[RMDB]
RNA sequence: GGGAACGACUCGAGUAGAGUCGAAAAUUCCCUUCUCUCGUCUUCCUCGGUCAACCUCCGGAGUUCCUCUUCCUCCUCCUUGCUGAGUGACUUUCCUCCCGCGCUCAGCUGCUUCUUCUUGUUCUCGGCGCUUUCUGCUUCGGCAGAAAGAAAAGAAACAACAACAACAAC
Reactivity to DMS in 0.01 (KOAc 150mM, MgCl2 10mM, bicine 150mM(pH8.5), 24C), signal-to-noise 6, nucleotides 027 to 129: u000u040c000c010c030u000u000c050u000c040u000c060g020u000c030u010u010c020c000u020c000g010g020u030c120a120a130c110c040u020c030c000g040g020a150g030u000u000c040c020u000c040u000u000c070c000u020c010c010u030c020c020u010u060g040c030u040g010a040g030u000g030a070c080u020u010u020c050c020u020c010c000c080g000c020g000c000u000c040a040g020c050u000g010c080u000u000c020u000u000c020u000u000g000u020u030c040u020c000g000g000c180g030
Reactivity to 2A3 in 0.01 (KOAc 150mM, MgCl2 10mM, bicine 150mM(pH8.5), 24C), signal-to-noise 5, nucleotides 027 to 129: u040u000c020c000c000u070u020c030u000c010u020c010g060u000c010u120u050c030c010u030c010g020g000u040c040a080a070c020c010u010c010c010g040g010a050g020u030u030c010c010u010c000u050u010c010c000u010c000c000u020c000c000u020u040g000c000u010g010a040g000u000g050a110c030u080u100u070c010c000u020c010c010c000g030c000g000c000u010c010a020g000c010u030g010c000u030u070c000u050u000c000u020u050g020u070u010c050u010c010g030g000c050g000

An RNA of 170 nucleotides, treated with DMS and 2A3 and read out base by base. Values are in units of 0.01, from 0 to 300, in steps of 10. 2A3 adducts were read by reverse transcription with SuperScript II with manganese. For 2A3, 21,585 sequencing reads were counted. The reactions ran in a buffer of 150 mM KOAc, 10 mM MgCl2 and 150 mM bicine (pH 8.5), at 24 C. DMS adducts were read by reverse transcription with MarathonRT.